RNA sequence: GGGAACGACUCGAGUAGAGUCGAAAAGAAAACUGCACUUCUAGCAGGUAAUAGAAGUAAAAACGUCAACUCUAGACGGUAAAAGAGUUAAAAACGCGCUUUCCACGCGGUAAUGGAAAGAAAGAAAGGGAAUGAAUAUCUUCGGAUAUUCAUUCCCAAAAGAAACAACAACAACAAC
Reactivity to DMS in 0.01 (KOAc 150mM, MgCl2 10mM, bicine 150mM(pH8.5), 24C), signal-to-noise 2, nucleotides 027 to 126: g040a110a030a120a300c010u000g030c100a110c000u000u000c060u000a090g010c060a070g080g000u040a050a200u010a000g000a010a030g050u110a020a050a160a070a180c000g000u000c040a030a110c030u000c030u090a100g050a000c010g000g130u110a040a020a020a030g060a010g000u100u110a040a040a060a070a300c010g000c030g030c090u020u000u020c020c070a030c040g060c010g000g040u020a010a010u000g020g000a000a000a000g000a140a270a000g010a050a150a050
Reactivity to 2A3 in 0.01 (KOAc 150mM, MgCl2 10mM, bicine 150mM(pH8.5), 24C), signal-to-noise 2, nucleotides 027 to 126: g120a000a050a000a040c010u000g000c000a020c290u010u020c000u020a040g000c050a020g000g260u050a100a060u000a000g020a020a000g070u300a010a130a060a000a000c000g000u000c030a000a030c040u000c000u040a030g010a070c040g030g000u060a000a010a010a000g060a000g000u140u150a120a070a000a000a000c040g010c000g000c020u000u000u000c000c000a000c080g030c040g000g010u050a100a020u020g000g010a020a000a020g050a020a230a080g120a060a040a050